[RMDB]
RNA sequence: GGGAACGACUCGAGUAGAGUCGAAAAGCGGCCCUUUCCGCCGUCUCGCAAACGGGCGCUGGCUUUAGGAAAGGAUGUUCCGUGGCCGUAAAUGCAGGUUCACAGCGCUUCGUAUCGCGGCAAUAUCAUCUCGUACCGUAUUCGUACGGUACGAGAUAAAAGAAACAACAACAACAAC
Reactivity to 2A3 in 0.01 (KOAc 150mM, MgCl2 10mM, bicine 150mM(pH8.5), 24C), signal-to-noise 5, nucleotides 027 to 126: g030c010g010g010c000c000c000u000u030u000c010c010g020c010c000g030u000c020u030c060g040c080a120a090a060c040g020g030g000c050g010c030u070g020g020c040u060u110u250a060g010g060a040a020a000g070g020a070u130g050u140u020c010c040g100u040g040g000c000c000g030u060a030a080a050u120g040c050a000g030g040u070u160c080a030c040a080g010c020g000c000u210u240c070g010u050a050u070c080g010c000g030g010c000a020a060u120a060u180c030
Reactivity to DMS in 0.01 (KOAc 150mM, MgCl2 10mM, bicine 150mM(pH8.5), 24C), signal-to-noise 4, nucleotides 027 to 126: g000c010g020g000c020c030c060u000u000u000c040c050g000c090c070g010u000c010u000c100g030c120a050a180a040c050g020g010g000c030g030c010u020g010g010c070u000u020u030a120g000g000a040a060a090g020g010a120u010g000u000u010c000c000g030u010g020g020c000c000g020u000a040a080a080u030g020c070a080g000g000u030u000c100a150c040a050g000c010g000c010u010u020c070g040u010a050u010c130g020c000g010g000c140a140a060u080a090u030c160